Notes
Chemical mapping of a 207-nucleotide RNA with 2A3. The RNA was probed in 150 mM KOAc, 10 mM MgCl2 and 150 mM bicine (pH 8.5) at 24 C. The 2A3 profile rests on 389 reads.
[RMDB]
RNA sequence: GGGAACGACUCGAGUAGAGUCGAAAAUCGUCUGUGAAACGGGGUCACACGAGCUGCCAGGCAGGCCACAGCGUUCACCCGGCAGCUCAAGCCCAGCCACAACCACACUGGCUGCUUUUCUCAAUGAAGCAAAGUAUUUAGGUGUUCACCACGUGGACCUCAUGGAGGAUUUCGAUCCUCCAUGAGGAAAAGAAACAACAACAACAAC
Reactivity to 2A3 in 0.01 (KOAc 150mM, MgCl2 10mM, bicine 150mM(pH8.5), 24C), signal-to-noise 1, nucleotides 027 to 156: u080c030g070u020c060u100g010u020g230a030a120a120c080g000g010g110g000u200c070a020c020a050c270g000a000g010c000u000g050c000c000a030g020g030c020a070g050g000c050c020a240c160a150g100c000g090u270u300c020a110c050c000c010g020g020c010a000g000c000u010c000a000a000g020c000c000c000a010g040c090c020a050c020a120a070c050c000a030c000a000c050u010g020g000c000u000g010c000u060u040u110u040c000u000c000a170a300u200g070a110a020g030c030a020a020a020g150u050a200u200u230u130a030g080g000u020g030u060u110c080a110c120c000a020c080g020u040g000g070a170